Source: RMDB library OK2TRN, as collected in RNAgym. This 177-nucleotide RNA was probed chemically with 2A3 and DMS. For DMS the reverse transcriptase was MarathonRT. The 2A3 profile rests on 6,799 reads.
RNA sequence: GGGAACGACUCGAGUAGAGUCGAAAAGCGCGAUCCUGAUCCAGUACUAUACUGCGCCAGAGCGCUGGCCGGCGCUGGCCGAUCGCGCCGUACGAGUACGCGCGGAUCUGGCCGAUCAGCGCCAGAGCUGACUGAGAAUGUUCGCAUUCUCAGUCAGAAAAGAAACAACAACAACAAC
Reactivity to 2A3 in 0.01 (KOAc 150mM, MgCl2 10mM, bicine 150mM(pH8.5), 24C), signal-to-noise 4, nucleotides 027 to 126: g010c010g000c010g050a100u120c010c000u010g020a040u040c020c010a000g050u030a080c120u120a100u040a120c000u030g020c040g020c050c000a010g010a020g030c020g000c010u020g000g080c020c060g010g010c020g000c020u060g020g000c020c000g020a010u010c040g000c000g000c200c000g010u020a010c060g090a080g170u010a000c010g010c010g010c000g070g010a040u000c110u240g020g000c010c020g030a120u110c090a030g000c000g020c000c000a030g020a020g030
Reactivity to DMS in 0.01 (KOAc 150mM, MgCl2 10mM, bicine 150mM(pH8.5), 24C), signal-to-noise 7, nucleotides 027 to 126: g010c010g010c000g010a090u020c130c020u000g000a040u010c250c010a010g010u000a100c260u010a130u010a040c020u000g000c250g010c210c020a030g010a130g010c020g000c000u000g000g010c060c040g000g010c010g010c010u000g000g010c000c010g010a010u000c000g010c010g030c060c050g020u000a010c090g000a200g020u000a010c020g010c060g020c010g010g000a010u000c010u010g050g010c010c040g000a030u000c160a040g010c020g020c000c020a060g010a110g010

Reactivities are given for positions 27 through 126.